RNA sequence: GGGAACGACUCGAGUAGAGUCGAAAAGAGUACCUCGGUGAGGAGGUCAUGCAUGAUUCACGACGGCCCGGUCAUACCCCAUGCGCGUCGCAUUCGCUUGCAGUCGGUAACCCGUGCCUGCGUAUGGCUAAAUAUAGGCUUUCGAGCCUAUAUUUAGAAAAGAAACAACAACAACAAC
Reactivity to DMS in 0.01 (KOAc 150mM, MgCl2 10mM, bicine 150mM(pH8.5), 24C), signal-to-noise 9, nucleotides 027 to 126: g010a180g020u010a050c010c010u000c030g010g020u010g020a140g010g010a040g000g010u000c060a080u010g020c090a080u010g010a130u010u010c100a080c070g000a090c070g000g000c020c040c030g000g010u000c100a130u000a100c070c050c050c120a070u000g010c020g010c050g010u000c220g010c140a080u010u010c040g010c040u000u000g020c060a050g010u000c150g000g010u010a060a150c150c010c030g010u000g000c010c020u000g010c060g010u000a060u000g010g010
Reactivity to 2A3 in 0.01 (KOAc 150mM, MgCl2 10mM, bicine 150mM(pH8.5), 24C), signal-to-noise 8, nucleotides 027 to 126: g070a010g040u100a030c010c010u030c050g100g180u270g110a140g060g070a010g020g010u020c010a030u130g030c020a050u100g030a140u200u130c070a020c060g070a010c010g040g000c000c020c010g000g000u020c020a020u090a050c000c010c010c010a020u030g010c030g000c010g060u070c060g020c090a060u110u090c020g010c040u050u150g000c010a020g030u070c020g000g020u020a030a040c000c000c020g010u020g010c000c010u030g000c010g030u090a070u120g080g000